[RMDB]
RNA sequence: GGGAACGACUCGAGUAGAGUCGAAAAGAUAUGGAAGUUGAAACUUACGAUUUAGGACAUGAACUCAGGUCGGAAACGACCUGGUGUUCAACAGCCUACGGAUCGUAAGUUUCAACUUCCUAAGUCACUUACCACUAAUGUUCGCAUUAGUGGUAAGAAAAGAAACAACAACAACAAC
Reactivity to DMS in 0.01 (KOAc 150mM, MgCl2 10mM, bicine 150mM(pH8.5), 24C), signal-to-noise 7, nucleotides 027 to 126: g010a050u000a300u020g010g010a020a000g030u010u000g000a010a010a020c000u000u000a000c010g020a020u000u000u000a040g010g010a060c110a270u000g000a010a010c000u000c000a000g000g020u000c010g010g000a160a070a260c010g010a020c000c000u000g010g000u020g020u000u000c000a020a070c300a160g000c000c000u020a060c300g020g010a010u000c000g010u000a000a000g010u000u000u000c000a000a000c010u000u000c010c000u010a010a040g000u000c030a190